[RMDB]
RNA sequence: GGGAACGACUCGAGUAGAGUCGAAAAGAUAUGGAUCCAGAUAUUAUCGUAUGGCAAGGCUCUGUAAGGAUCGGAAACGAUCUAUCAGAGCUGAUGACCCAUACGUUUACAGAAGGGAUCCUAAGUCCAGAAGUUCAAAGUUCGCUUUGAACUUCUGAAAAGAAACAACAACAACAAC
Reactivity to 2A3 in 0.01 (KOAc 150mM, MgCl2 10mM, bicine 150mM(pH8.5), 24C), signal-to-noise 2, nucleotides 027 to 126: g020a040u120a040u130g000g000a010u010c010c010a000g210a300u080a090u230u130a070u120c000g000u000a010u010g010g030c050a090a300g030g000c010u030c010u000g080u160a300a250g210g000a000u000c000g020g000a050a080a010c000g000a020u020c010u000a050u170c000a000g010a010g020c000u000g000a000u000g000a000c000c000c000a010u000a010c000g010u070u080u010a060c050a020g130a120a060g120g030g010a000u000c000c000u030a100a000g010u000c030
Reactivity to DMS in 0.01 (KOAc 150mM, MgCl2 10mM, bicine 150mM(pH8.5), 24C), signal-to-noise 4, nucleotides 027 to 126: g010a110u000a230u010g000g020a030u000c000c000a070g010a210u000a070u000u010a050u000c010g010u000a010u000g000g000c050a070a060g000g010c000u000c000u000g000u000a150a240g010g000a010u000c000g010g000a110a090a150c010g010a010u000c010u000a300u030c020a010g010a010g020c000u000g020a030u020g000a080c300c000c010a010u000a000c000g000u010u000u020a090c260a040g000a230a170g000g000g010a020u000c000c000u000a040a070g000u000c070
Background: Chemical mapping of a 177-nucleotide RNA with 2A3 and DMS. The data come from the RNA Mapping Database (RMDB), library TTRDES. For DMS, 3,022 sequencing reads were counted.